[RMDB]
The record gives the reactivity of an RNA of 207 nucleotides to 2A3. It was measured as part of the RMDB library OK3TST. The RNA was probed in 150 mM KOAc, 10 mM MgCl2 and 150 mM bicine (pH 8.5) at 24 C.
RNA sequence: GGGAACGACUCGAGUAGAGUCGAAAACGCUUGAGCCCCAGAGUUAGAGGCUGCAGUAAGCCAGGAUUGUGCCACUGCACUCCAGCCUAGUAGUAUAGGAAUACCCUGUCUCUAAACAAACAAACAAAAACUCUUUGCACCCUAUAAUUGUAAAAGAGAUUAUGCUCCUGUUCGCAGGAGCAUAAUCAAAAGAAACAACAACAACAAC
Reactivity to 2A3 in 0.01 (KOAc 150mM, MgCl2 10mM, bicine 150mM(pH8.5), 24C), signal-to-noise 1, nucleotides 027 to 156: c030g010c010u010u090g030a040g000c000c030c040c040a040g090a010g020u010u120a000g000a030g100g020c000u030g060c020a010g010u090a090a000g000c010c030a010g100g050a210u190u120g030u120g100c030c020a080c040u080g010c010a020c010u070c050c010a020g000c010c020u010a060g080u080a000g000u010a110u030a080g000g050a030a020u100a150c000c000c000u010g010u020c010u020c020u170a080a130a060c050a020a140a020c010a000a110a040c030a030a090a020a020a040c020u020c020u010u050u020g010c020a040c010c020c010u100a120u070a300a070u160u120g110u100a110a000a000a000g100a010